[RMDB]
RNA sequence: GGGAACGACUCGAGUAGAGUCGAAAAGGUCGCAGUAGGGAUCCACUGCCCGCCCCAGGUAUGGGGGGGGGGGCGUCACACCCGCCCCCGGUCCACCUAUCCACCUUCGGGCUUUCGGGCAGCACUGCCAUCGUUUAAGGUUCGCCUUAAACGAUGGAAAAGAAACAACAACAACAAC
Reactivity to DMS in 0.01 (KOAc 150mM, MgCl2 10mM, bicine 150mM(pH8.5), 24C), signal-to-noise 3, nucleotides 027 to 126: g000g020u000c120g020c050a070g020u000a070g020g000g010a100u000c080c080a250c050u000g010c010c000c020g020c130c010c000c070a040g000g010u010a040u000g000g000g000g000g000g000g000g000g000g000g000c000g000u010c120a100c260a090c250c240c000g000c000c000c000c020c000g000g000u020c030c050a120c010c010u000a050u000c120c180a030c020c010u000u000c180g000g000g010c200u000u010u000c100g030g010g000c010a020g000c090a040c080u010g010
Reactivity to 2A3 in 0.01 (KOAc 150mM, MgCl2 10mM, bicine 150mM(pH8.5), 24C), signal-to-noise 1, nucleotides 027 to 126: g030g010u070c030g010c100a040g040u160a090g070g090g030a040u040c000c050a020c050u010g020c000c010c030g010c000c000c000c010a000g000g030u080a020u070g040g000g000g000g000g000g000g000g010g000g010c010g030u070c030a100c020a030c110c010c000g000c020c000c000c000c000g010g070u030c010c000a140c010c010u040a030u080c090c040a020c010c010u090u220c080g000g000g080c030u090u120u140c040g000g030g030c010a000g000c030a010c020u060g040